[RMDB]
RNA sequence: GGGAACGACUCGAGUAGAGUCGAAAACUGGCCUGUGUGCAAGUACGUGAGUACUUGACUCUCUACGGGAGUAGAGACACACAGAUCGUGGAGCGAUGUCUUGGAACUACUCCCGUAGUUCACGUAUGACUCACGUCAUACCAAGACGCCAGCCACGCCGCCUACUCAGUUUCGACUGAGUAGGCGGAAAAGAAACAACAACAACAAC
Reactivity to 2A3 in 0.01 (KOAc 150mM, MgCl2 10mM, bicine 150mM(pH8.5), 24C), signal-to-noise 1, nucleotides 027 to 156: c000u000g010g000c000c000u000g000u000g010u000g000c050a080a050g030u000a000c000g020u010g040a010g010u110a160c040u050u120g050a070c000u010c000u020c000u020a000c000g020g000g000a020g000u000a000g000a000g030a010c000a000c000a000c000a010g000a010u000c000g000u160g190g090a130g080c020g000a010u000g010u020c000u000u030g010g000a010a050c000u010a010c000u000c000c000c040g000u000a000g000u100u190c100a110c050g130u130a080u230g020a000c010u000c010a010c040g000u000c010a000u010a030c000c000a000a010g000a010c000g010c000c000a000g000c000c010a020c050g030
Source information:
This 207-nucleotide RNA was probed chemically with 2A3. Source: RMDB library OK3TST, as collected in RNAgym.